Chemical mapping of a 177-nucleotide RNA with 2A3 and DMS. It was measured as part of the RMDB library M2PK50. The 2A3 profile rests on 1,555 reads. The reactions ran in a buffer of 150 mM KOAc, 10 mM MgCl2 and 150 mM bicine (pH 8.5), at 24 C. DMS adducts were read by reverse transcription with MarathonRT.
[RMDB]
RNA sequence: GGGAACGACUCGAGUAGAGUCGAAAACGCCUAAUCUUCGGAUUAGGCGAAAAGAGGACGUGCAGGAGGCUUCAAAGGAAACGACGAUCACUCCCGAACAGAAAAGACUGGAGUUCGCUCCAGUCAAUCUACUACAAUGCUUCGGCAUUGUAGUAGAAAAAGAAACAACAACAACAAC
Reactivity to 2A3 in 0.01 (KOAc 150mM, MgCl2 10mM, bicine 150mM(pH8.5), 24C), signal-to-noise 2, nucleotides 027 to 126: c010g020c020c000u000a010a000u000c000u020u060c240g060g000a000u000u010a000g000g000c000g010a000a010a000a000g070a050g020g030a020c030g000u070g030c030a000g060g100a050g040g020c020u050u040c100a140a070a010g020g000a070a070a020c040g060a010c030g030a090u060c020a030c080u030c000c020c020g000a060a000c050a170g180a090a070a030a000g010a000c010u010g020g000a030g010u040u060c180g040c120u000c000c000a010g000u010c010a000a000
Reactivity to DMS in 0.01 (KOAc 150mM, MgCl2 10mM, bicine 150mM(pH8.5), 24C), signal-to-noise 2, nucleotides 027 to 126: c020g020c000c000u020a010a000u000c000u000u010c250g030g010a020u010u000a000g010g060c000g020a010a010a060a110g020a130g000g000a050c070g030u000g010c060a040g020g010a060g000g010c040u000u000c050a050a070a180g030g000a100a090a090c040g000a170c070g010a090u000c060a100c050u000c010c020c010g020a050a070c170a140g000a120a050a130a090g000a000c000u010g000g000a010g010u000u030c300g000c000u000c000c000a010g000u000c000a010a060